This 207-nucleotide RNA was probed chemically with 2A3. For 2A3, 1,115 sequencing reads were counted. Source: RMDB library M2RFPK, as collected in RNAgym.
RNA sequence: GGGAACGACUCGAGUAGAGUCGAAAAACGCAUCGGCUACGGCCGACGCGAAGAUUUGCAUAUAGUGUAGUAUGCAACUAAAAAUAAAGAAAUACACGUCAAGAACAGUCCGGUACGCCGGACUGAAAAAAGGACUCUUUCUUCGGAAAGAGUCCAACACUUCAUGUGAGUUCGCUCACAUGAAGUGAAAAGAAACAACAACAACAAC
Reactivity to 2A3 in 0.01 (KOAc 150mM, MgCl2 10mM, bicine 150mM(pH8.5), 24C), signal-to-noise 2, nucleotides 027 to 156: a000c010g000c000a020u010c000g020g000c020u020a030c300g130g000c000c000g000a010c020g000c010g020a030a040g020a070u040u020u030g000c010a000u010a000u000a040g010u000g000u010a000g010u000a000u000g000c010a010a010c030u220a060a020a030a060a070u210a060a040a020g090a040a100a000u010a000c000a000c010g050u100c100a100a080g000a240a050c000a000g000u000c020c000g000g010u050a020c180g120c050c000g000g000a000c000u000g010a010a000a000a030a000a000g000g000a000c000u010c000u010u000u010c000u030u110c160g040g010a000a000a000g000a000g000u000c000c010a000a000